Chemical mapping of a 177-nucleotide RNA with DMS and 2A3.
DMS adducts were read by reverse transcription with MarathonRT.
RNA sequence: GGGAACGACUCGAGUAGAGUCGAAAAGAAGGGCUUAGGAAGUUGUGGGAUGAAUUUUGUACUGGUGCUGUGGCAGGUUUUUGUCAUUUUGUCUAUUUUGUGUCCAACAUUAGCUUGGGCUCGAAAGCACUGUUGGAGCUUUCGAGCUCCAACAGUGAAAAGAAACAACAACAACAAC
Reactivity to DMS in 0.01 (KOAc 150mM, MgCl2 10mM, bicine 150mM(pH8.5), 24C), signal-to-noise 4, nucleotides 027 to 126: g000a110a070g010g000g010c050u000u010a080g000g010a090a090g010u000u000g030u000g000g000g010a090u010g020a090a070u000u010u020u000g020u010a080c060u000g000g020u010g000c070u010g020u000g010g020c060a070g000g000u000u000u000u010u000g010u020c070a110u000u000u000u010g010u000c060u000a140u000u000u000u000g010u000g000u000c000c000a020a040c020a240u000u020a110g010c150u010u000g000g000g000c010u000c010g010a010a030a050g010
Reactivity to 2A3 in 0.01 (KOAc 150mM, MgCl2 10mM, bicine 150mM(pH8.5), 24C), signal-to-noise 2, nucleotides 027 to 126: g030a000a020g070g010g000c020u170u120a020g030g100a080a060g100u140u100g050u160g020g020g020a070u030g060a080a120u070u130u100u200g040u030a060c040u040g080g000u040g010c010u050g010u030g060g000c020a020g100g030u020u020u010u130u090g020u030c010a030u020u100u100u120g050u000c050u020a120u050u040u010u040g030u010g020u000c000c010a000a010c020a130u130u150a020g070c070u000u010g000g000g000c000u020c020g060a040a020a010g010